An RNA of 177 nucleotides, treated with 2A3 and DMS and read out base by base. DMS adducts were read by reverse transcription with MarathonRT. The DMS profile rests on 98,555 reads.
RNA sequence: GGGAACGACUCGAGUAGAGUCGAAAAGAAAGCGUGUGGCGUCGUAUGACCGGCCAAAUGCGACUGCGAUGCAGUCUUGCGCGCGAAAGUCCUUGAUGCUGGUAGGCCGGUUAUAGCAUCGGACGAAGGCCGUUCGCGACUUCGGUUGCGGGUGGCCAAAAGAAACAACAACAACAAC
Reactivity to 2A3 in 0.01 (KOAc 150mM, MgCl2 10mM, bicine 150mM(pH8.5), 24C), signal-to-noise 9, nucleotides 027 to 126: g090a020a050a000g020c020g000u030g020u060g110g010c000g000u010c000g000u030a070u140g050a040c000c000g010g000c010c010a080a150a070u250g030c070g040a020c030u050g000c010g060a060u110g000c010a050g050u100c060u160u210g010c020g000c000g000c010g050a120a040a010g010u000c010c010u040u280g000a010u010g000c010u040g020g090u050a080g040g000c000c000g000g000u000u040a020u010a000g000c000a000u000c000g000g000a000c020g010a080a060
Reactivity to DMS in 0.01 (KOAc 150mM, MgCl2 10mM, bicine 150mM(pH8.5), 24C), signal-to-noise 9, nucleotides 027 to 126: g010a100a090a110g000c020g020u010g020u010g010g010c010g000u010c010g010u000a030u020g010a050c000c010g000g000c000c020a090a110a090u030g010c110g010a060c040u020g020c010g000a090u020g020c000a080g000u020c110u010u030g010c010g000c020g010c040g010a090a070a130g010u000c000c010u020u040g030a020u000g020c000u000g000g020u020a090g010g000c000c000g000g000u010u010a030u010a020g010c000a010u000c010g010g000a020c020g010a110a120